[RMDB]
This 177-nucleotide RNA was probed chemically with DMS and 2A3.
For 2A3, 1,011 sequencing reads were counted.
2A3 adducts were read by reverse transcription with SuperScript II with manganese.
The DMS profile rests on 1,946 reads.
Values cover nucleotides 27 to 126.

RNA sequence: GGGAACGACUCGAGUAGAGUCGAAAACUUGGGUAGCUCUUAAUGAAACGUUUUCUACAACCAGCUGCCUCUGAUUAAUCCACCAAUCAGCCAUGGUCUCAUGGAGAACAGAAUAACGCUCCCCCAAUGAUGCAGAUGUAUUCGUACAUCUGCAUCAAAAAGAAACAACAACAACAAC
Reactivity to DMS in 0.01 (KOAc 150mM, MgCl2 10mM, bicine 150mM(pH8.5), 24C), signal-to-noise 3, nucleotides 027 to 126: c060u010u000g000g010g010u000a010g000c010u010c090u000u000a140a140u000g000a070a080a140c140g000u000u000u000u000c030u000a120c160a080a080c060c150a020g010c030u000g010c000c010u010c010u000g000a050u000u000a070a120u000c080c050a080c130c150a020a040u000c030a020g000c090c050a040u000g000g000u000c200u010c010a010u000g000g000a070g000a080a110c090a060g000a050a070u010a070a080c060g000c080u000c010c000c010c030c030a060a120
Reactivity to 2A3 in 0.01 (KOAc 150mM, MgCl2 10mM, bicine 150mM(pH8.5), 24C), signal-to-noise 1, nucleotides 027 to 126: c000u010u050g010g010g010u030a010g040c040u030c020u090u220a170a130u170g080a170a090a020c090g090u030u000u040u080c030u040a030c030a040a060c030c010a010g000c000u010g010c030c000u000c000u010g000a030u060u030a070a160u040c030c000a000c040c030a020a060u080c010a010g010c050c020a030u060g000g090u030c070u090c160a060u050g000g040a040g020a050a040c060a060g110a200a050u170a110a020c040g000c050u050c010c000c010c000c010a000a070